An RNA of 177 nucleotides, treated with 2A3 and DMS and read out base by base. 2A3 adducts were read by reverse transcription with SuperScript II with manganese. The reactions ran in a buffer of 150 mM KOAc, 10 mM MgCl2 and 150 mM bicine (pH 8.5), at 24 C. The data come from the RNA Mapping Database (RMDB), library OK1LIB. DMS adducts were read by reverse transcription with MarathonRT. Values cover nucleotides 27 to 126.

[RMDB]
RNA sequence: GGGAACGACUCGAGUAGAGUCGAAAACGCUGACGGUGACCGAGUCGCCGAGAUCUUCGAGCAGCACGAAUGCGCGGGCGCUCGGCCCGGCAUGCAGGCGCACGUUGUCGAGGGCGUUGCCCACCGCACGUGCCAUUUAUUUCGAUAAAUGGCACGUAAAAGAAACAACAACAACAAC
Reactivity to 2A3 in 0.01 (KOAc 150mM, MgCl2 10mM, bicine 150mM(pH8.5), 24C), signal-to-noise 9, nucleotides 027 to 126: c030g000c020u030g020a030c010g020g030u020g050a220c020c040g050a050g050u160c040g000c000c020g040a080g030a150u080c070u080u060c040g070a070g050c060a020g030c020a040c130g120a140a040u100g010c280g000c050g080g020g000c020g000c070u050c030g030g000c000c000c000g000g000c010a020u170g010c030a020g050g000c020g000c010a040c060g060u070u110g030u050c030g020a090g010g070g030c020g020u010u080g090c000c010c000a020c030c050g060c010
Reactivity to DMS in 0.01 (KOAc 150mM, MgCl2 10mM, bicine 150mM(pH8.5), 24C), signal-to-noise 5, nucleotides 027 to 126: c080g010c010u000g000a090c010g000g020u000g000a110c010c040g000a070g000u020c040g030c010c020g000a080g010a070u020c070u000u010c030g010a110g010c040a080g030c090a130c080g000a060a020u010g020c060g000c060g010g000g010c010g000c070u010c060g000g000c020c000c000g000g000c030a010u030g010c060a140g010g000c060g020c100a070c120g000u010u000g020u000c040g010a170g000g010g000c030g000u010u010g000c000c000c000a130c110c110g000c150